The record gives the reactivity of an RNA of 177 nucleotides to 2A3 and DMS. The reactions ran in a buffer of 150 mM KOAc, 10 mM MgCl2 and 150 mM bicine (pH 8.5), at 24 C. 2A3 adducts were read by reverse transcription with SuperScript II with manganese. Reactivities are given for positions 27 through 126. For DMS the reverse transcriptase was MarathonRT. DMS (dimethyl sulfate) methylates the pairing face of unpaired adenines and cytosines.
RNA sequence: GGGAACGACUCGAGUAGAGUCGAAAACGACGGCGGCGAAGUCGAGCACUGCGGCAACGGCGCGCGCUGCUUCGUCAAGUUCGUCCGCGACCACGGGCUCACCGGCAAGGCGAGCGUGCGCGUCGAAUAGGAUUACGGAGUUCGCUCCGUAAUCCUAAAAAGAAACAACAACAACAAC
Reactivity to 2A3 in 0.01 (KOAc 150mM, MgCl2 10mM, bicine 150mM(pH8.5), 24C), signal-to-noise 1, nucleotides 027 to 126: c030g100a010c000g060g080c030g000g000c050g060a040a030g100u050c090g000a030g050c040a080c080u070g010c000g090g000c020a070a060c030g020g000c000g000c000g020c010g020c040u100g000c000u140u180c010g000u010c000a050a050g060u130u120c040g060u040c000c040g020c040g120a140c000c040a040c060g000g010g020c030u080c050a140c060c020g070g000c120a120a050g020g010c050g020a000g030c010g020u030g000c040g040c000g020u040c000g020a010a020
Reactivity to DMS in 0.01 (KOAc 150mM, MgCl2 10mM, bicine 150mM(pH8.5), 24C), signal-to-noise 1, nucleotides 027 to 126: c100g010a060c140g050g020c070g030g000c010g000a090a070g000u000c030g010a080g020c050a070c080u020g000c060g020g000c070a140a070c080g010g000c030g000c020g000c000g020c000u000g000c040u000u000c020g000u000c010a100a190g000u000u000c080g000u000c010c070g020c020g010a070c110c140a090c020g000g000g020c040u000c130a140c070c040g000g030c110a070a180g000g020c000g020a020g010c020g020u000g000c000g000c040g020u020c000g010a030a130